[RMDB]
RNA sequence: GGGAACGACUCGAGUAGAGUCGAAAAGAGAAGUGUAUUUGUGUUCAUGAUUUGCACUUCAUGUCAAAAGAAAUUUCGCUUUUUGACAUCGGCGCAAAUAAACAAGGAAUUGGCUUUUCAGCUUAUACCUAUGCAGUCAGUUCGCUGACUGCAUAGGAAAAGAAACAACAACAACAAC
Reactivity to 2A3 in 0.01 (KOAc 150mM, MgCl2 10mM, bicine 150mM(pH8.5), 24C), signal-to-noise 5, nucleotides 027 to 126: g040a020g020a050a000g030u090g050u140a160u010u080u020g090u030g080u060u090c120a070u190g210a060u040u030u020g030c020a010c010u070u110c070a020u000g000u000c000a010a000a010a020g120a060a200a150u190u250u130c160g040c030u070u090u040u030u060g000a000c000a000u030c070g020g000c010g000c020a000a030a090u070a040a110a010c040a060a010g060g030a070a060u070u080g120g000c000u050u050u090u120c060a050g020c010u030u050a050u050a090
Reactivity to DMS in 0.01 (KOAc 150mM, MgCl2 10mM, bicine 150mM(pH8.5), 24C), signal-to-noise 2, nucleotides 027 to 126: g000a020g000a000a000g010u000g000u020a050u000u010u030g000u000g000u000u010c300a140u030g050a020u000u000u000g000c000a020c000u000u010c200a000u000g000u000c000a000a000a000a000g000a070a130a190u030u020u070c210g000c070u010u020u010u010u000g000a000c000a010u020c280g000g020c060g000c000a010a010a000u010a030a030a030c010a010a060g000g040a010a050u000u010g020g000c030u000u000u000u000c090a210g010c090u010u000a070u030a130
The data come from the RNA Mapping Database (RMDB), library OK1LIB. The record gives the reactivity of an RNA of 177 nucleotides to 2A3 and DMS. For DMS the reverse transcriptase was MarathonRT. For DMS, 3,346 sequencing reads were counted. The 2A3 profile rests on 2,538 reads.